[RMDB]
RNA sequence: GGGAACGACUCGAGUAGAGUCGAAAAGUUGGGGAAUUCGUUCCCCAACACUGAAUAUCUUCCGAAGCCGAACGGGUAAACCGGCAUCUAAAAAUAAAUAAAAGCUCUAUGCUUUCGAGCAUAGAAAUAGUAAUCGUGAAUUCGUUCACGAUUACUAAAAAGAAACAACAACAACAAC
Reactivity to DMS in 0.01 (KOAc 150mM, MgCl2 10mM, bicine 150mM(pH8.5), 24C), signal-to-noise 2, nucleotides 027 to 126: g010u020u000g000g000g000g010a010a030u000u000c150g010u000u010c000c000c000c000a010a000c010a070c130u000g000a120a090u010a100u000c090u000u000c010c020g010a030a180g000c030c030g000a080a020c040g020g030g030u010a020a050a070c290c020g000g010c010a070u010c080u010a010a110a080a070a070u010a040a060a120u000a030a070a070a120g010c200u000c010u000a000u020g000c000u000u000u000c140g000a030g000c000a000u000a000g010a010a090a100
Reactivity to 2A3 in 0.01 (KOAc 150mM, MgCl2 10mM, bicine 150mM(pH8.5), 24C), signal-to-noise 2, nucleotides 027 to 126: g010u000u000g010g000g020g000a000a020u010u050c100g020u020u000c030c000c000c000a000a000c000a000c000u000g000a060a060u080a060u110c030u090u000c010c040g050a130a000g000c000c000g010a030a020c040g050g120g040u130a080a000a050c080c000g010g030c000a000u000c020u140a010a100a080a280a270u190a050a120a050u210a080a180a070a050g000c000u010c000u010a000u000g000c000u040u070u100c220g020a000g000c000a000u000a000g030a060a020a010